The record gives the reactivity of an RNA of 177 nucleotides to DMS and 2A3. The reactions ran in a buffer of 150 mM KOAc, 10 mM MgCl2 and 150 mM bicine (pH 8.5), at 24 C. For DMS, 643 sequencing reads were counted. DMS adducts were read by reverse transcription with MarathonRT. Reactivities are given for positions 27 through 126. The data come from the RNA Mapping Database (RMDB), library TTRDEL.
RNA sequence: GGGAACGACUCGAGUAGAGUCGAAAAGAUAUGGACUGGCGAAUGCUCGAUGAAACGUAACAUCCAUCGGAAACGAUGGUGGUGGAGAGCAAACCAGUCCUAAGUCAAAGCUCACUUCGGUGAGCAACCGAGAUUACGUGUUCGCACGUAAUCUCGGAAAAGAAACAACAACAACAAC
Reactivity to DMS in 0.01 (KOAc 150mM, MgCl2 10mM, bicine 150mM(pH8.5), 24C), signal-to-noise 1, nucleotides 027 to 126: g000a070u000a300u020g010g010a010c040u000g000g010c000g020a150a110u000g020c000u000c010g010a140u070g000a080a180a040c020g000u000a000a010c170a050u030c000c000a000u000c010g000g080a060a120a290c040g010a000u000g000g010u000g000g010u000g020g040a030g000a000g000c000a000a270a070c000c000a010g000u040c000c000u000a000a020g000u000c020a140a090a140g000c000u000c000a010c000u010u000c210g030g010u010g020a020g000c000a020a070
Reactivity to 2A3 in 0.01 (KOAc 150mM, MgCl2 10mM, bicine 150mM(pH8.5), 24C), signal-to-noise 2, nucleotides 027 to 126: g020a000u050a010u110g000g000a000c020u000g010g030c120g230a300a210u130g000c000u010c030g300a300u080g120a100a070a000c010g040u050a030a000c050a300u100c000c000a000u000c000g000g080a100a050a010c020g010a000u000g000g000u020g000g010u000g010g050a070g020a000g000c040a010a050a050c000c010a010g010u000c000c000u000a020a010g010u030c040a060a050a000g020c000u010c010a000c000u040u160c200g080g000u000g000a010g040c000a010a010